An RNA of 177 nucleotides, treated with 2A3 and read out base by base. The data come from the RNA Mapping Database (RMDB), library OK1LIB. The reactions ran in a buffer of 150 mM KOAc, 10 mM MgCl2 and 150 mM bicine (pH 8.5), at 24 C.
[RMDB]
RNA sequence: GGGAACGACUCGAGUAGAGUCGAAAAUCAAUAUUCCAAAACAAGCAUCUGCUAAAGACGCUUAUGGCUGGAUUGUCAUGGGACGUGUAUUAGCUAUUAUCGUGGCAUUUCUAUUUUGGAUGAGUAGCGCCCGGGCUAUAUUCGUAUAGCCCGGGCGAAAAGAAACAACAACAACAAC
Reactivity to 2A3 in 0.01 (KOAc 150mM, MgCl2 10mM, bicine 150mM(pH8.5), 24C), signal-to-noise 2, nucleotides 027 to 126: u070c050a020a010u050a030u240u000c000c000a020a000a000a000c080a160a000g000c090a070u010c000u170g000c020u120a250a030a030g220a020c020g060c030u000u070a000u050g020g000c020u060g070g060a170u210u170g000u010c000a020u040g000g010g130a180c020g000u000g090u120a280u110u040a000g000c020u050a080u110u050a050u130c120g070u020g010g000c000a000u000u120u100c070u120a170u010u070u000u000g000g000a000u020g000a020g020u070a070g080